[RMDB]
RNA sequence: GGGAACGACUCGAGUAGAGUCGAAAAUCGGAAGGCCGCCGCGGACCUGCAGAGAAGAAGAUAGGGGCAGAGGGGGUUUGAGCCUCGUCGUCGACGAAGGGGUGCAAACCGAGUGCCUGAGCUGGUCGUUUACUAACCUGUUCGCAGGUUAGUAAACAAAAGAAACAACAACAACAAC
Reactivity to DMS in 0.01 (KOAc 150mM, MgCl2 10mM, bicine 150mM(pH8.5), 24C), signal-to-noise 1, nucleotides 027 to 126: u000c050g010g020a130a010g000g000c050c030g030c060c060g020c120g000g000a080c050c040u010g020c050a040g000a140g020a090a110g000a080a060g010a080u000a060g000g000g000g000c030a020g000a080g030g010g000g010g010u010u000u010g000a140g000c020c000u000c010g020u010c000g010u000c190g000a090c080g010a040a030g010g010g000g000u000g010c010a010a030a020c020c010g000a150g020u000g020c010c010u020g000a050g010c050u000g000g000u010c090